[RMDB]
RNA sequence: GGGAACGACUCGAGUAGAGUCGAAAAUCGAUAAGCCGGAUUCGGAAUAUUUGAAUCUCCUCAAGAUCGAUGCGCUCGGCCUUCGAACUCUGGGCGUCAUCCAGGACGCGAACUGUGUGACUGCGCAGCCCGCAUAGAAGUUCGCUUCUAUGCGGGCAAAAGAAACAACAACAACAAC
Reactivity to DMS in 0.01 (KOAc 150mM, MgCl2 10mM, bicine 150mM(pH8.5), 24C), signal-to-noise 1, nucleotides 027 to 126: u000c000g010a050u010a050a180g070c050c000g000g000a120u000u000c010g000g010a110a150u010a070u000u010u010g000a050a060u010c050u050c030c030u010c100a130a080g000a140u020c030g010a020u000g000c160g000c000u000c020g000g010c080c050u020u000c140g020a090a160c180u010c040u020g000g000g010c000g010u000c050a090u000c090c080a060g010g000a050c120g000c110g010a020a100c030u010g010u000g010u010g010a050c050u020g040c000g000c080a200
Reactivity to 2A3 in 0.01 (KOAc 150mM, MgCl2 10mM, bicine 150mM(pH8.5), 24C), signal-to-noise 1, nucleotides 027 to 126: u050c010g000a000u020a090a000g050c030c020g060g090a130u250u150c040g050g040a110a090u070a130u140u100u190g040a040a050u060c020u050c030c040u080c040a100a040g020a140u060c030g040a000u030g000c050g010c000u010c020g030g000c000c020u100u130c020g060a120a050c020u000c030u040g070g090g000c000g010u080c030a000u010c010c010a040g020g090a080c080g010c000g070a100a030c000u030g000u000g030u000g140a060c070u060g010c020g040c000a010